[RMDB]
RNA sequence: GGGAACGACUCGAGUAGAGUCGAAAACGCCGCUCCUGGGCCGCCGCCGCCGGCAGCAGCCAACAGGCAGCUGGGCCGGCCUGGCCGGGCUCCAGAGGCGCAGAGCGGGUUAAAGUGUGCGCCAGGCCGACACACUAGGUUUCGACCUAGUGUGUCGAAAAGAAACAACAACAACAAC
Reactivity to DMS in 0.01 (KOAc 150mM, MgCl2 10mM, bicine 150mM(pH8.5), 24C), signal-to-noise 1, nucleotides 027 to 126: c010g030c010c000g010c000u000c030c010u000g000g000g010c010c010g000c140c120g020c020c040g010c020c000g010g030c000a060g010c010a080g000c000c010a110a160c220a190g000g000c020a020g040c010u010g000g030g030c020c020g000g000c000c020u020g000g000c050c120g030g040g020c000u030c000c020a050g000a130g020g000c040g040c040a060g000a080g020c000g000g000g010u000u000a080a110a110g010u010g030u010g050c070g010c070c010a200g020g030c150